[RMDB]
RNA sequence: GGGAACGACUCGAGUAGAGUCGAAAAGACAAUCCAGGGAACCGGAUGUCAUCACGUUGUUGCAGUACCAGAAGGCAUCUUAAAUCCGAUCUGCAAAUAAGCAUGUAGAAAGCUGAUGUGGGCUUUAAAAACGUGGUGCUGUUCGCAGCACCACGAACACUAGUGUCUACUUCGGUAGACACUAGUGAAAAGAAACAACAACAACAAC
Reactivity to 2A3 in 0.01 (KOAc 150mM, MgCl2 10mM, bicine 150mM(pH8.5), 24C), signal-to-noise 2, nucleotides 027 to 156: g000a010c020a020a180u060c010c010a060g200g000g090a030a180c050c050g000g000a020u000g000u020c020a040u120c070a070c140g020u020u020g000u000u040g010c050a050g050u140a140c000c050a020g060a020a000g010g030c030a000u010c000u050u160a170a080a090u000c020c010g060a100u050c010u020g000c000a000a050a070u100a120a110g070c040a030u070g040u020a040g170a070a100a020g000c070u040g050a020u090g120u100g050g000g000c040u090u190u270a020a040a010a010a000c000g000u000g010g010u000g000c010u020g040u010u170c220g000c080a010g000c020a000c000c000a000c000g000a010a000
Reactivity to DMS in 0.01 (KOAc 150mM, MgCl2 10mM, bicine 150mM(pH8.5), 24C), signal-to-noise 1, nucleotides 027 to 156: g010a110c030a080a100u000c030c040a020g030g070g000a230a130c010c000g000g010a120u000g010u010c040a180u000c060a080c080g040u010u000g010u000u020g030c020a050g040u010a090c070c070a070g030a070a160g030g040c050a080u010c030u000u000a050a050a110u010c050c060g010a090u010c070u000g040c000a070a030a200u000a040a120g030c060a140u010g000u010a110g000a070a000a140g020c100u000g010a120u000g050u000g000g020g020c050u010u000u000a000a050a140a080a080c000g060u010g030g010u000g020c000u000g010u010u000c280g050c000a000g080c000a010c040c000a000c010g020a030a020